[RMDB]
RNA sequence: GGGAACGACUCGAGUAGAGUCGAAAAGAUUGUGGCUUGGUAUGCACCAUCCGGUGGAUCUGCUUGGUGCGGCUUUGUUGGUCGGCGUAUUGUACUUAUUGGUUCCGCAGCAAUAUCCAUUGCAACAGUUUUAGCGUAUGUUCGCAUACGCUAAAACAAAAGAAACAACAACAACAAC
Reactivity to DMS in 0.01 (KOAc 150mM, MgCl2 10mM, bicine 150mM(pH8.5), 24C), signal-to-noise 4, nucleotides 027 to 126: g010a110u000u000g040u010g010g020c040u000u010g010g020u000a060u010g010c020a060c020c020a080u000c160c070g010g020u000g010g000a090u000c050u000g010c080u000u000g000g000u000g010c050g000g020c100u000u000u010g030u020u000g010g020u010c030g010g010c090g020u010a070u000u010g010u000a050c080u010u000a100u010u010g010g000u000u000c030c030g020c130a110g000c020a040a030u000a080u010c090c100a090u000u000g000c040a100a110c170a080
Reactivity to 2A3 in 0.01 (KOAc 150mM, MgCl2 10mM, bicine 150mM(pH8.5), 24C), signal-to-noise 1, nucleotides 027 to 126: g070a060u070u130g020u050g070g000c070u040u090g070g010u100a050u210g030c010a010c010c010a000u050c050c040g000g060u030g060g020a060u000c010u050g050c030u050u060g040g060u050g040c010g010g030c000u130u090u060g040u020u090g020g020u020c030g010g050c010g000u070a090u030u120g040u000a030c040u080u070a090u090u140g060g000u020u060c010c020g020c020a030g010c000a030a000u020a070u100c050c030a020u000u080g040c010a050a020c010a070